The data come from the RNA Mapping Database (RMDB), library OK1LIB. An RNA of 177 nucleotides, treated with 2A3 and DMS and read out base by base. The DMS profile rests on 803 reads. The RNA was probed in 150 mM KOAc, 10 mM MgCl2 and 150 mM bicine (pH 8.5) at 24 C. DMS adducts were read by reverse transcription with MarathonRT.

RNA sequence: GGGAACGACUCGAGUAGAGUCGAAAAGGCCAACACUCAUGGAUGUCGCCACGGCGUGUCAUUUAUUAACAGUUUUCCAUCCAGAAACAAGUAACGCUGAGUUGCCUAGGAUUCUGGUUAACCACAACGCGUGUUAUGUUUUCGAACAUAACACGCGAAAAGAAACAACAACAACAAC
Reactivity to 2A3 in 0.01 (KOAc 150mM, MgCl2 10mM, bicine 150mM(pH8.5), 24C), signal-to-noise 3, nucleotides 027 to 126: g060g000c040c050a050a020c070a050c030u050c020a050u100g060g020a050u060g030u100c000g020c040c000a060c110g100g000c070g020u030g030u060c030a080u010u000u120a200u070u120a120a060c020a030g050u000u070u030u000c050c010a080u000c000c000a000g010a030a020a030c020a030a000g030u000a040a010c030g030c130u130g140a010g110u000u000g000c000c010u040a090g040g110a150u000u030c010u020g000g040u010u090a070a020c070c000a050c040a150a070
Reactivity to DMS in 0.01 (KOAc 150mM, MgCl2 10mM, bicine 150mM(pH8.5), 24C), signal-to-noise 1, nucleotides 027 to 126: g000g040c090c010a140a050c110a140c070u000c110a120u000g000g000a010u040g000u000c030g060c030c000a230c080g080g050c040g000u050g000u010c040a010u090u000u140a010u050u000a140a150c160a030g000u000u160u000u000c000c110a230u000c000c040a000g000a000a010a010c050a140a270g190u000a000a050c000g000c180u140g000a210g000u000u000g000c000c000u000a240g000g000a220u000u030c000u070g000g000u050u000a070a110c150c030a050c110a050a070